[RMDB]
RNA sequence: GGGAACGACUCGAGUAGAGUCGAAAAACAAUCACGGGAUCGGCUCAAGAUGAUCCAGCGUCUGCUGCGCGACCACUACCGCGAGAUCGCCGAAGAGAUCACCCGGUCGCUCACCGAGUCCCUGCAGGACUGAGUUAUUGUUCGCAAUAACUCAGUCAAAAGAAACAACAACAACAAC
Reactivity to 2A3 in 0.01 (KOAc 150mM, MgCl2 10mM, bicine 150mM(pH8.5), 24C), signal-to-noise 9, nucleotides 027 to 126: a000c090a040a080u160c060a030c060g020g000g010a020u020c010g030g000c020u040c090a070a040g040a120u060g010a020u000c010c000a010g010c010g050u030c040u130g100c050u140g040c050g010c020g080a090c020c090a090c120u140a090c040c020g010c020g020a020g010a060u100c050g000c040c010g070a110a030g050a020g010a050u020c000a020c010c030c000g010g010u020c010g000c010u020c010a160c010c010g010a010g040u050c000c000c010u040g040c060a040g130
Reactivity to DMS in 0.01 (KOAc 150mM, MgCl2 10mM, bicine 150mM(pH8.5), 24C), signal-to-noise 5, nucleotides 027 to 126: a090c170a140a100u030c110a110c030g000g000g000a040u000c020g020g000c050u000c080a100a110g000a050u030g000a040u010c000c020a100g000c000g000u020c020u000g010c050u040g000c040g000c060g000a080c060c080a110c130u020a040c080c040g030c060g000a080g000a040u000c050g040c000c050g030a080a080g000a120g000a040u000c030a060c060c020c100g000g010u000c010g010c100u000c000a090c030c010g000a140g010u000c000c000c010u000g000c070a240g000
An RNA of 177 nucleotides, treated with 2A3 and DMS and read out base by base. Conditions: 150 mM KOAc, 10 mM MgCl2 and 150 mM bicine (pH 8.5), 24 C. For DMS the reverse transcriptase was MarathonRT.